An RNA of 177 nucleotides, treated with 2A3 and DMS and read out base by base. 2A3 adducts were read by reverse transcription with SuperScript II with manganese. The data come from the RNA Mapping Database (RMDB), libraries RFM100 and RFMREP.
RNA sequence: GGGAACGACUCGAGUAGAGUCGAAAAUGACACGACCCACACCACGAUGUUGAGGAAGGCCAGAAUAAUAUUGCGUAUGACUGGCGGUGCGUAAUCCGCCAAGCGCAGGUAGCCGCGAAAGCCGAGUCGAAACACAUCUUUUCGAAGAUGUGUUUCGAAAAGAAACAACAACAACAAC
Reactivity to 2A3 in 0.01 (KOAc 150mM, MgCl2 10mM, bicine 150mM(pH8.5), 24C), signal-to-noise 3, nucleotides 027 to 126: u160g010a030c020a040c180g040a060c000c040c000a030c010a000c040c000a040c020g140a120u050g020u070u100g030a060g020g050a070a020g030g000c030c000a040g050a050a070u170a120a030u040a050u090u050g000c020g010u040a070u150g220a140c050u010g000g000c000g000g000u020g000c120g100u090a030a090u020c000c000g000c030c020a010a000g000c000g000c000a000g040g000u010a030g020c020c030g020c000g030a080a000a000g030c020c010g010a020g030u040
Reactivity to DMS in 0.01 (KOAc 150mM, MgCl2 10mM, bicine 150mM(pH8.5), 24C), signal-to-noise 2, nucleotides 027 to 126: u040g010a040c080a130c140g020a140c040c030c010a100c110a030c040c050a040c110g050a030u000g020u020u030g010a090g000g040a100a100g030g000c060c000a060g000a120a020u010a020a060u010a110u010u010g010c020g010u000a010u030g020a130c230u010g010g000c000g000g000u000g000c200g000u010a180a120u020c000c000g000c020c010a020a080g070c010g000c060a030g020g010u010a020g040c020c020g020c060g010a030a100a120g000c010c020g030a090g020u020